[RMDB]
RNA sequence: GGGAACGACUCGAGUAGAGUCGAAAAGGCAGACGGUUUCGCGAAUGUAUGAAUCAAUCAUAAACACGUGAAGGAAGUCUGCUGCUUAAGAUAUAGUCCGAGCCACAGGGAAACCUUGGGAAUUUUGGCAACAAACCGAAACAGAUAAAUAACAUCGCCAGUAACUAGUGUUCGCACUAGUUACUGGAAAAGAAACAACAACAACAAC
Reactivity to DMS in 0.01 (KOAc 150mM, MgCl2 10mM, bicine 150mM(pH8.5), 24C), signal-to-noise 1, nucleotides 027 to 156: g030g020c050a040g000a040c040g030g030u000u000u000c000g060c030g000a090a150u000g030u040a040u000g020a060a250u000c290a110a240u000c050a020u020a080a020a080c050a160c020g020u000g020a100a070g000g030a170a290g020u000c000u000g070c000u000g040c110u000u000a030a110g030a120u020a090u030a150g070u000c030c010g020a120g000c060c020a130c050a090g010g020g020a170a090a070c040c010u010u000g000g010g010a050a050u000u000u000u010g000g000c000a140a030c130a030a020a080c000c000g030a080a080a070c060a030g000a180u000a090a050a170u000a050a080c080a010u010c050g000
Reactivity to 2A3 in 0.01 (KOAc 150mM, MgCl2 10mM, bicine 150mM(pH8.5), 24C), signal-to-noise 2, nucleotides 027 to 156: g030g000c000a000g000a010c040g100g050u000u000u010c020g030c000g020a140a060u090g020u050a010u000g020a010a120u200c160a070a060u050c000a050u040a020a030a020c030a000c040g030u020g020a010a000g060g090a060a030g000u000c000u010g000c000u000g000c000u040u040a090a030g040a090u080a030u080a220g050u000c000c010g000a020g030c040c020a080c080a040g010g000g030a070a040a050c030c000u040u040g000g000g100a100a110u120u090u020u070g020g010c030a040a010c020a100a170a020c060c010g070a050a060a010c040a020g070a120u100a120a180a020u100a050a050c050a080u110c110g010